[RMDB]
Overview
Source: RMDB libraries RFM100 and RFMREP, as collected in RNAgym. An RNA of 177 nucleotides, treated with DMS and 2A3 and read out base by base. As a SHAPE reagent, 2A3 marks flexible, mostly unpaired nucleotides at the ribose 2'-OH. Reactivities are given for positions 27 through 126.
RNA sequence: GGGAACGACUCGAGUAGAGUCGAAAACGCUCGCAUUCAUGGUCACUUCCGAAGCGCUUUAGUGCCUUCCGUCCCCAAACCGCCAACAGCCAGGGCGGCCUCUCCCCGCGGUUUGUCAAAUGAUCCGCUACUACAGGGACUUCGGUCCCUGUAGUAGAAAAGAAACAACAACAACAAC
Reactivity to DMS in 0.01 (KOAc 150mM, MgCl2 10mM, bicine 150mM(pH8.5), 24C), signal-to-noise 3, nucleotides 027 to 126: c100g010c010u000c050g020c060a040u030u000c050a070u000g010g000u010c030a070c050u000u030c030c020g000a080a040g040c090g010c040u020u020u030a090g040u000g010c020c000u040u000c040c020g000u010c000c010c010c060a050a080a150c070c010g010c020c060a060a040c090a100g020c030c030a090g000g000g010c000g010g010c050c000u000c000u000c020c020c020c070g030c030g000g000u000u010u010g020u010c090a050a150a170u010g000a140u020c020c090g000
Reactivity to 2A3 in 0.01 (KOAc 150mM, MgCl2 10mM, bicine 150mM(pH8.5), 24C), signal-to-noise 4, nucleotides 027 to 126: c060g000c010u020c030g040c050a080u080u030c020a040u130g050g040u050c030a020c080u090u010c030c020g030a040a020g040c030g030c080u060u110u200a070g030u070g040c010c000u030u030c010c010g030u030c010c010c010c010a060a110a050c030c010g020c000c010a050a050c030a100g040c020c010a030g000g010g050c000g010g000c000c010u020c010u010c000c010c000c000g000c020g000g010u000u070u110g060u080c040a040a090a090u130g030a050u050c020c010g010